[RMDB]
RNA sequence: GGGAACGACUCGAGUAGAGUCGAAAAGUAGGCAGCACGCGUUAUCAAAUCGACGAUGCGCUGGAAGGGGUUUCGGCCCGCGCGGUGUGACGGUUGAGUGGGGCUGCAGCGGGUCGACGCGAGUUCAAUUAGCCAUAUGUUUCGACAUAUGGCUAAUAAAAGAAACAACAACAACAAC
Reactivity to 2A3 in 0.01 (KOAc 150mM, MgCl2 10mM, bicine 150mM(pH8.5), 24C), signal-to-noise 2, nucleotides 027 to 126: g080u110a070g120g000c030a040g030c060a040c070g010c000g030u000u090a130u140c090a060a100a120u160c060g060a070c030g060a180u040g000c020g000c040u010g020g040a050a030g000g040g000g000u010u040u020c000g010g000c040c000c010g000c000g000c000g000g000u140g120u120g210a060c040g020g140u240u220g070a100g040u100g000g100g040g000c000u020g000c030a020g020c000g000g000g020u010c000g000a010c000g010c020g020a070g000u040u090c020a020
Reactivity to DMS in 0.01 (KOAc 150mM, MgCl2 10mM, bicine 150mM(pH8.5), 24C), signal-to-noise 6, nucleotides 027 to 126: g010u000a100g010g010c020a060g020c030a050c050g000c030g000u000u010a120u010c170a050a120a130u010c130g010a060c030g000a060u000g010c040g010c030u010g000g010a080a080g020g010g000g000u010u000u000c010g010g000c010c010c000g030c010g010c010g000g020u000g010u010g010a080c060g000g020u010u010g000a130g020u000g020g020g000g010c000u000g010c010a070g040c000g010g010g010u000c010g000a010c110g000c060g010a190g010u010u000c080a080
Structure probing data (2A3 and DMS) for a 177-nucleotide construct. DMS adducts were read by reverse transcription with MarathonRT. The RNA was probed in 150 mM KOAc, 10 mM MgCl2 and 150 mM bicine (pH 8.5) at 24 C.